[RMDB]
RNA sequence: GGGAACGACUCGAGUAGAGUCGAAAAAGCGGCCCUUUCGAGGGCCGCUGAUGGAAAGCCAGCCGAAAGGCAUUUUAUUCCUUGGCUGGCGAUAGCCUAAAAUUCACGCUGCUUUCGAGCAGCGUAAGAUACUUCCUUGAUUCGUCAAGGAAGUAUCAAAAGAAACAACAACAACAAC
Reactivity to DMS in 0.01 (KOAc 150mM, MgCl2 10mM, bicine 150mM(pH8.5), 24C), signal-to-noise 5, nucleotides 027 to 126: a030g020c000g030g030c010c000c000u000u000u010c140g010a020g020g020g030c000c010g000c000u000g010a080u000g010g010a100a110a260g000c000c010a000g010c000c010g020a060a040a020g010g000c300a030u000u010u010u000a130u010u010c000c010u000u000g010g010c000u000g000g000c000g010a020u000a090g010c000c000u000a040a050a090a110u000u010c130a040c000g010c000u000g000c000u000u000u000c150g010a020g020c000a010g000c000g010u000a010a050
Reactivity to 2A3 in 0.01 (KOAc 150mM, MgCl2 10mM, bicine 150mM(pH8.5), 24C), signal-to-noise 2, nucleotides 027 to 126: a000g010c010g010g030c020c000c070u010u020u030c180g070a000g000g020g040c010c000g030c010u000g000a000u020g040g040a090a000a000g010c000c000a010g020c010c020g210a150a060a010g000g000c010a020u020u070u010u090a150u130u030c000c000u010u060g000g000c000u000g000g000c010g000a020u020a020g020c000c000u040a060a070a030a020u140u110c040a000c020g000c000u010g020c000u000u010u180c150g020a010g000c020a000g010c000g000u000a000a000
Annotation
An RNA of 177 nucleotides, treated with DMS and 2A3 and read out base by base. It was measured as part of the RMDB library M2PK50. For DMS, 8,186 sequencing reads were counted. For 2A3, 4,223 sequencing reads were counted.